The record gives the reactivity of an RNA of 207 nucleotides to 2A3 and DMS. For 2A3 the reverse transcriptase was SuperScript II with manganese.

[RMDB]
RNA sequence: GGGAACGACUCGAGUAGAGUCGAAAACCCUGUCAUGAGGCCGAAACGAAGGCACGUACCCCUUCGAAUGGCGUCGGGGAGUCUGCGGCUAUAUAUGCGCCUAAUGCUGGCAUCCGGGAACGAGCGUAUUAGACAGUAAUCUUCGGAUUACUGUCAAUCGUUCAAUACGUUUCGACGUAUUGAACGAAAAAGAAACAACAACAACAAC
Reactivity to 2A3 in 0.01 (KOAc 150mM, MgCl2 10mM, bicine 150mM(pH8.5), 24C), signal-to-noise 3, nucleotides 027 to 156: c010c000c000u030g080u070c090a080u090g050a050g050g050c040c040g050a050a010a020c010g030a090a040g010g050c050a040c040g090u170a140c000c020c040c000u000u020c010g110a200a210u150g080g040c040g070u040c000g010g000g000g000a060g030u000c000u060g050c030g030g000c040u010a020u010a010u010a040u300g070c030g050c030c000u090a110a090u100g040c040u040g030g000c010a070u020c020c010g000g000g030a120a010c060g040a030g070c020g010u060a070u110u020a170g000a000c000a000g000u000a000a000u000c010u020u070c110g080g010a000u000u000a000c000u000g000u000c000a000a000
Reactivity to DMS in 0.01 (KOAc 150mM, MgCl2 10mM, bicine 150mM(pH8.5), 24C), signal-to-noise 2, nucleotides 027 to 156: c000c000c000u000g010u000c070a060u000g010a070g010g020c010c010g010a120a100a200c040g020a060a020g010g020c050a120c060g020u000a170c020c020c020c000u010u010c000g050a140a170u000g020g020c010g050u000c070g020g000g040g010a110g020u000c040u000g010c040g020g020c050u000a130u020a030u000a090u010g020c040g010c000c010u010a060a140u000g020c060u000g020g000c030a070u010c020c020g020g010g000a100a090c060g010a060g000c020g020u000a150u000u010a220g010a020c000a040g020u010a000a000u000c010u000u000c300g020g000a040u000u000a000c000u020g000u010c000a010a050

Source: RMDB library M2RFPK, as collected in RNAgym.